[RMDB]
RNA sequence: GGGAACGACUCGAGUAGAGUCGAAAAAGCAUUAAAUUAUUGAUAAAGUAGGCAACAAUGUCAGCAGAAUUACAAUUGCCGGCGGAGAUUUAGGCGCUCCGUGUAAAGCAGUCUCACGCUAAUCUGGGAUGUCUCAAUAGUUCGCUAUUGAGACAUCAAAAGAAACAACAACAACAAC
Reactivity to 2A3 in 0.01 (KOAc 150mM, MgCl2 10mM, bicine 150mM(pH8.5), 24C), signal-to-noise 5, nucleotides 027 to 126: a000g090c060a050u140u170a060a090a080u190u200a120u050u120g080a070u110a150a140a020g110u160a080g070g020c020a040a010c030a110a090u090g030u060c030a000g020c010a020g140a070a060u110u040a040c050a090a250u060u040g010c010c000g000g000c000g070g020a020g000a010u070u110u220a070g040g010c080g010c040u000c000c010g010u000g050u080a060a080a010g010c000a000g030u000c000u010c010a060c030g000c020u060a030a080u060c020u030g080g050
Reactivity to DMS in 0.01 (KOAc 150mM, MgCl2 10mM, bicine 150mM(pH8.5), 24C), signal-to-noise 4, nucleotides 027 to 126: a090g010c080a080u020u020a060a090a100u010u030a100u020u030g000a110u010a050a060a150g000u030a040g010g000c030a030a040c130a050a090u010g010u020c080a080g020c060a060g000a090a080u020u010a030c090a050a140u040u010g010c030c020g020g020c010g000g000a050g000a060u000u000u010a100g000g010c100g000c020u000c020c000g000u000g010u000a030a080a090g000c010a020g010u000c030u000c030a090c070g010c060u000a070a050u010c000u010g000g030
This 177-nucleotide RNA was probed chemically with 2A3 and DMS. The RNA was probed in 150 mM KOAc, 10 mM MgCl2 and 150 mM bicine (pH 8.5) at 24 C. It was measured as part of the RMDB libraries RFM100 and RFMREP. For DMS the reverse transcriptase was MarathonRT.